This 207-nucleotide RNA was probed chemically with DMS and 2A3. For DMS, 2,619 sequencing reads were counted.
RNA sequence: GGGAACGACUCGAGUAGAGUCGAAAAAAUGCCGCUUUCCAAUUCGAAGAUGGCUUUCAGACCGCCGCCAAGGUCUUCGACGCCACGCAGGCCCCAACGCGACGUCGACAUGUUGCCGGAGGUCAUGCGAACCUGGUUCGAGCCACCGGGCGAAGCCCAUCCUCAGUGUGUUCGCACACUGAGGAUGAAAAGAAACAACAACAACAAC
Reactivity to DMS in 0.01 (KOAc 150mM, MgCl2 10mM, bicine 150mM(pH8.5), 24C), signal-to-noise 1, nucleotides 027 to 156: a070a050u010g000c030c030g020c020u010u000u030c020c020a170a200u000u000c120g000a000a030g020a100u000g000g010c000u010u000u000c080a170g020a070c040c010g010c040c020g040c010c030a120a110g030g010u010c030u000u000c020g020a050c140g010c020c020a170c010g000c000a110g000g030c020c020c030c000a080a050c090g030c000g000a010c020g000u000c070g040a090c230a160u020g010u000u000g020c010c020g000g000a030g010g000u010c000a100u000g040c090g000a030a040c030c030u010g000g010u000u010c030g000a150g030c070c050a070c050c000g020g060g000c000g010a210a170g040c060c070
Reactivity to 2A3 in 0.01 (KOAc 150mM, MgCl2 10mM, bicine 150mM(pH8.5), 24C), signal-to-noise 3, nucleotides 027 to 156: a000a000u140g020c020c010g050c020u070u050u030c030c050a160a200u130u150c080g060a040a040g110a210u080g000g000c000u040u060u010c050a060g010a070c000c040g030c010c010g050c070c070a100a130g000g010u020c000u050u020c020g000a020c080g020c060c020a010c010g000c010a030g000g030c000c000c010c000a040a030c070g010c000g020a060c010g040u180c030g060a070c040a140u200g010u050u030g030c030c010g030g000a160g010g010u040c070a170u060g040c000g030a040a070c010c050u080g070g000u030u010c010g020a000g000c000c010a020c030c020g010g020g020c000g010a030a010g000c010c010
Values cover nucleotides 27 to 156.